[RMDB]
Annotation: An RNA of 207 nucleotides, treated with DMS and 2A3 and read out base by base. Values cover nucleotides 27 to 156.
RNA sequence: GGGAACGACUCGAGUAGAGUCGAAAAAGUUCUAGUCCUCACCUAAGAUCAGACUCACAUGGCCCUCAAAGAAAGAGCACUCGGUUGGGCUUUGUGGUGGGGAUUAGUGUCUCAUUUUUAGUCCCAAAUUAAAAACGAGAUUUUGGGCUGUACAUCAAUUAUACUAGGCUUUCGAGCCUAGUAUAAUAAAAGAAACAACAACAACAAC
Reactivity to DMS in 0.01 (KOAc 150mM, MgCl2 10mM, bicine 150mM(pH8.5), 24C), signal-to-noise 1, nucleotides 027 to 156: a110g000u000u000c010u000a060g020u020c010c000u020c000a030c010c020u010a080a070g020a090u000c030a150g030a100c060u000c050a180c040a140u000g030g000c010c010c010u010c040a090a080a190g000a040a090a080g010a150g020c050a080c060u000c050g030g030u010u000g000g030g050c000u000u010u010g030u010g020g030u010g030g050g070g000a030u000u000a010g010u020g020u010c010u010c000a010u010u000u000u010u000a040g000u000c020c040c030a040a070a070u000u000a020a040a030a030a060c020g000a030g000a170u000u000u000u000g000g030g040c070u000g030u000a060c070a180u000c040a180
Reactivity to 2A3 in 0.01 (KOAc 150mM, MgCl2 10mM, bicine 150mM(pH8.5), 24C), signal-to-noise 1, nucleotides 027 to 156: a000g030u130u040c000u000a000g020u000c000c000u000c000a020c000c020u100a180a060g050a150u160c040a070g100a170c040u050c110a000c000a000u030g000g000c000c020c020u030c040a080a200a000g010a080a050a010g110a060g020c030a040c120u110c070g070g000u190u110g010g000g070c000u000u120u080g000u010g000g000u000g000g020g000g000a010u000u000a000g010u000g000u000c010u000c020a020u020u240u090u100u200a040g050u140c000c000c010a000a020a040u090u040a090a110a020a040a000c080g020a040g030a160u010u000u000u000g000g020g000c040u090g040u120a070c060a150u060c070a150